The record gives the reactivity of an RNA of 177 nucleotides to DMS and 2A3. The DMS profile rests on 2,085 reads. Source: RMDB library OK2TRN, as collected in RNAgym. The reactions ran in a buffer of 150 mM KOAc, 10 mM MgCl2 and 150 mM bicine (pH 8.5), at 24 C.

RNA sequence: GGGAACGACUCGAGUAGAGUCGAAAAACUGUGCCGGAACUGAACCGUGGCGCGCUGGAUGUGGCUCUCGGACACCUGGGCGUACCGUUUACCUGUAUCGGGCAAAUGACCGCCGAUAUCGAAGGGCUCUUAGGCAUUGGUUCGCCAAUGCCUAAGAAAAAGAAACAACAACAACAAC
Reactivity to DMS in 0.01 (KOAc 150mM, MgCl2 10mM, bicine 150mM(pH8.5), 24C), signal-to-noise 2, nucleotides 027 to 126: a120c090u010g010u000g020c030c010g010g010a100a100c150u010g000a060a090c050c060g010u000g030g030c050g010c070g010c060u020g000g010a080u000g010u010g000g010c020u000c030u010c080g000g010a100c130a070c060c040u010g000g000g010c010g000u000a090c060c020g000u000u000u010a080c030c020u000g040u000a060u010c100g000g000g010c040a030a060a080u010g010a080c220c040g020c010c000g020a090u010a060u000c140g010a070a070g000g000g030c110
Reactivity to 2A3 in 0.01 (KOAc 150mM, MgCl2 10mM, bicine 150mM(pH8.5), 24C), signal-to-noise 1, nucleotides 027 to 126: a010c070u040g040u130g070c000c030g080g010a100a110c060u150g000a090a000c070c040g090u060g010g010c010g000c020g000c090u060g010g080a150u120g050u060g060g050c020u020c020u000c060g000g050a050c010a050c030c030u050g070g000g000c000g020u030a060c020c040g020u090u070u050a090c000c000u040g030u070a070u110c060g060g030g060c060a030a200a150u180g080a070c000c020g090c040c010g030a050u040a030u020c100g050a030a100g020g000g010c070
For 2A3 the reverse transcriptase was SuperScript II with manganese.
The 2A3 profile rests on 1,106 reads.